[RMDB]
RNA sequence: GGGAACGACUCGAGUAGAGUCGAAAAACACUUUGGUCGUGGGGUACGCGUUGCUCCCGGUGCUGUGGAUUUUCAGCCUGUCACUCAAGCCGACGUCAACGGUCAAGGACGGCAAGCUGAUUCCGUCCGAUCCACGCUCAUUCGUGAGCGUGGAUCGAAAAGAAACAACAACAACAAC
Reactivity to 2A3 in 0.01 (KOAc 150mM, MgCl2 10mM, bicine 150mM(pH8.5), 24C), signal-to-noise 3, nucleotides 027 to 126: a000c040a030c020u060u060u160g170g000u060c020g060u260g020g010g010g020u040a020c080g010c100g300u240u050g000c010u000c030c010c020g000g010u060g010c050u040g030u030g000g040a070u000u000u010u110c000a010g010c030c000u010g000u000c010a020c080u070c030a070a070g000c030c020g030a180c080g260u150c070a270a070c030g020g040u080c000a090a010g020g020a070c020g010g000c020a010a000g000c020u000g010a050u050u000c000c000g100u120c130
Reactivity to DMS in 0.01 (KOAc 150mM, MgCl2 10mM, bicine 150mM(pH8.5), 24C), signal-to-noise 2, nucleotides 027 to 126: a130c030a010c040u010u000u010g020g020u010c020g000u010g050g000g020g040u000a040c070g040c260g000u010u000g000c000u000c010c010c000g000g010u000g010c060u000g050u000g010g000a300u000u000u010u010c010a050g010c030c030u000g000u000c000a050c020u000c050a100a250g010c010c020g020a120c190g020u010c250a090a130c030g000g000u000c010a110a190g000g000a050c060g000g010c100a040a030g010c050u010g010a070u000u010c000c000g000u000c050
Structure probing data (2A3 and DMS) for a 177-nucleotide construct. For DMS the reverse transcriptase was MarathonRT. 2A3 adducts were read by reverse transcription with SuperScript II with manganese. Values cover nucleotides 27 to 126. The DMS profile rests on 1,544 reads.